The record gives the reactivity of an RNA of 177 nucleotides to 2A3 and DMS. The RNA was probed in 150 mM KOAc, 10 mM MgCl2 and 150 mM bicine (pH 8.5) at 24 C. The DMS profile rests on 4,419 reads.
RNA sequence: GGGAACGACUCGAGUAGAGUCGAAAAGUCGGUGUCGAAUUGUUCGACCUCACCAUGCUUGCGUAUCGUGGUGUAGGGCAACACGACCAGGAAAUACACUACCAAAGCGAUCAGCAAGAAGUUGAUAUCCUAAUGCGAUAUUCGUAUCGCAUUAGGAAAAAGAAACAACAACAACAAC
Reactivity to 2A3 in 0.01 (KOAc 150mM, MgCl2 10mM, bicine 150mM(pH8.5), 24C), signal-to-noise 2, nucleotides 027 to 126: g070u040c030g000g090u120g010u100c020g040a170a180u200u090g050u090u050c070g040a070c000c000u020c000a020c010c010a020u070g000c030u130u130g060c100g120u140a060u110c000g050u040g000g000u060g080u160a060g020g070g000c020a080a020c060a040c090g020a040c020c000a030g000g150a010a080a020u140a020c050a010c030u150a070c050c020a050a040a010g020c040g000a040u060c020a000g060c040a040a070g140a080a000g130u100u060g070a070u000a070
Reactivity to DMS in 0.01 (KOAc 150mM, MgCl2 10mM, bicine 150mM(pH8.5), 24C), signal-to-noise 5, nucleotides 027 to 126: g020u010c070g010g000u010g020u000c010g000a100a230u010u010g020u000u000c060g030a040c000c010u000c020a040c000c020a020u000g010c120u010u000g000c140g010u000a050u000c020g030u000g010g000u000g010u010a030g010g000g010c050a040a020c070a080c120g000a060c020c050a150g000g000a100a090a090u010a080c050a060c050u000a140c030c060a070a150a100g020c090g000a020u000c050a060g010c010a080a070g010a070a150g010u000u000g010a110u010a150